[RMDB]
RNA sequence: GGGAACGACUCGAGUAGAGUCGAAAAUCUUCUCCUAUGGAACAAGGAUGCCACUUUGUUCGUGGUGAUUCUGCUGGUAAGCCUGCUAGGCAACCUUCGUACCAUAUUGGUAUGCGUGCUAUUGACAGCUAUCAUACGGUUUCGACCGUAUGAUAGCAAAAGAAACAACAACAACAAC
Reactivity to DMS in 0.01 (KOAc 150mM, MgCl2 10mM, bicine 150mM(pH8.5), 24C), signal-to-noise 6, nucleotides 027 to 126: u010c220u000u000c040u000c000c030u000a060u010g010g010a070a040c060a080a040g010g000a050u000g000c030c030a050c020u010u010u010g000u000u000c300g010u000g010g020u010g000a050u000u000c010u000g020c070u000g000g000u000a070a150g010c010c020u000g020c170u000a070g020g010c020a130a040c030c030u000u010c060g020u000a030c010c000a130u000a140u010u000g000g020u000a010u000g010c230g030u000g000c030u000a090u010u010g000a120c160a130
Reactivity to 2A3 in 0.01 (KOAc 150mM, MgCl2 10mM, bicine 150mM(pH8.5), 24C), signal-to-noise 5, nucleotides 027 to 126: u050c020u060u000c010u000c010c010u090a090u110g070g010a060a020c020a060a040g000g010a020u020g010c000c020a040c040u110u130u160g130u160u110c070g020u030g000g000u040g030a110u040u020c010u060g050c030u040g010g020u050a070a060g030c000c020u150g180c100u120a050g020g000c000a040a070c000c000u030u070c040g010u010a030c000c000a050u060a250u270u180g020g000u030a020u060g110c080g050u070g000c030u060a100u170u060g070a050c060a060